This 177-nucleotide RNA was probed chemically with 2A3 and DMS. The reactions ran in a buffer of 150 mM KOAc, 10 mM MgCl2 and 150 mM bicine (pH 8.5), at 24 C. It was measured as part of the RMDB library VIROID.
RNA sequence: GGGAACGACUCGAGUAGAGUCGAAAACUUAUGGGAGAAUGAUCACCUCUCAGCCCCUCCACCUUGGAGUGCCCUAUUCGAGGCACUGCAGUCUCGAUAGAAAGGCUAAGAACGUCGCAAUGACGUACAAACACAGAUUGUUCGCAAUCUGUGUUUGAAAAGAAACAACAACAACAAC
Reactivity to 2A3 in 0.01 (KOAc 150mM, MgCl2 10mM, bicine 150mM(pH8.5), 24C), signal-to-noise 3, nucleotides 027 to 126: c070u210u150a070u200g000g010g010a000g020a060a060u050g060a070u110c030a030c030c000u000c000u010c000a040g020c010c020c000c000u010c010c010a170c060c050u070u140g040g010a060g050u130g020c000c000c000u030a050u030u080c020g000a020g030g000c010a040c160u110g030c000a020g000u000c000u000c020g000a020u000a020g050a020a050a010g030g000c000u010a090a000g050a090a010c010g000u000c020g040c200a170a220u290g000a000c000g000u010a050
Reactivity to DMS in 0.01 (KOAc 150mM, MgCl2 10mM, bicine 150mM(pH8.5), 24C), signal-to-noise 4, nucleotides 027 to 126: c140u010u010a110u000g000g000g000a020g000a040a050u000g000a140u000c140a150c190c000u000c000u010c000a040g010c030c000c010c010u000c000c010a110c210c100u000u000g020g000a060g010u000g000c010c000c010u000a100u010u000c030g010a020g000g000c010a050c210u020g020c150a140g000u010c010u000c000g000a010u000a020g000a070a090a120g000g000c030u010a110a130g010a090a030c010g020u000c000g020c200a100a100u020g000a000c010g000u000a120